[RMDB]
RNA sequence: GGGAACGACUCGAGUAGAGUCGAAAAACAUAUUACGAUAUGAUUCAGAUCGUGUCUUACUGGUUCGUACCAAGGGACAUAAUGGUUUCUUGUUUCCAACCAAAGAACAAGUGGCGAGCCUGAAUAAAAAACUGACUGCCGUUCGCGGCAGUCAGAACAGACUAACUCGGUUCGCCGAGUUAGUCUGAAAAGAAACAACAACAACAAC
Reactivity to 2A3 in 0.01 (KOAc 150mM, MgCl2 10mM, bicine 150mM(pH8.5), 24C), signal-to-noise 2, nucleotides 027 to 156: a000c020a020u170a030u090u190a070c070g060a030u060a020u160g090a050u040u080c060a040g010a060u050c030g010u030g120u040c040u040u100a090c040u040g020g000u000u060c020g060u070a030c020c020a010a010g000g000g020a010c030a010u160a160a190u160g140g000u000u030u010c010u010u000g000u030u030u000c050c030a040a060c000c010a090a060a080g060a050a090c040a080a050g020u040g300g000c000g000a000g020c000c020u020g050a040a020u130a060a110a040a040a010a040c010u000g000a000c000u000g020c020c000g010u020u060c210g010c000g180g000c010a000g000u000c000a010g010a000a000